[RMDB]
RNA sequence: GGGAACGACUCGAGUAGAGUCGAAAAGAUAUGGAGCAUGUAGAGCAACAGCUGUAGGUCGGAAACGACCUGACAGACAUGCUCAGGCAUGCUCCUAAGUCAAAACAGUAAGGUUCGCCUUACUGAACUAUGUUGAGUUCUUCGGAACUCAACAUAGAAAAGAAACAACAACAACAAC
Reactivity to DMS in 0.01 (KOAc 150mM, MgCl2 10mM, bicine 150mM(pH8.5), 24C), signal-to-noise 3, nucleotides 027 to 126: g010a070u010a300u010g000g020a000g030c020a000u010g020u000a090g020a010g000c000a130a110c300a190g010c010u000g000u000a020g010g000u000c010g020g000a110a070a140c000g010a010c000c000u000g010a030c000a010g000a040c110a210u000g000c000u010c010a110g020g000c000a010u000g000c010u000c000c000u000a010a030g000u010c000a090a050a090a280c000a010g030u010a030a010g000g030u000u010c300g000c010c000u000u000a000c000u000g000a060a160
Reactivity to 2A3 in 0.01 (KOAc 150mM, MgCl2 10mM, bicine 150mM(pH8.5), 24C), signal-to-noise 2, nucleotides 027 to 126: g010a000u040a030u110g000g000a000g000c000a000u020g030u050a060g020a000g050c090a080a130c050a230g020c010u010g010u020a000g000g000u010c000g040g020a050a030a030c010g000a000c000c000u000g060a020c000a010g030a010c030a160u300g000c010u000c000a000g300g000c000a000u000g000c000u010c000c000u010a000a000g000u000c000a000a000a090a150c010a000g020u010a020a010g080g060u060u170c300g160c020c000u000u020a000c000u010g000a010a010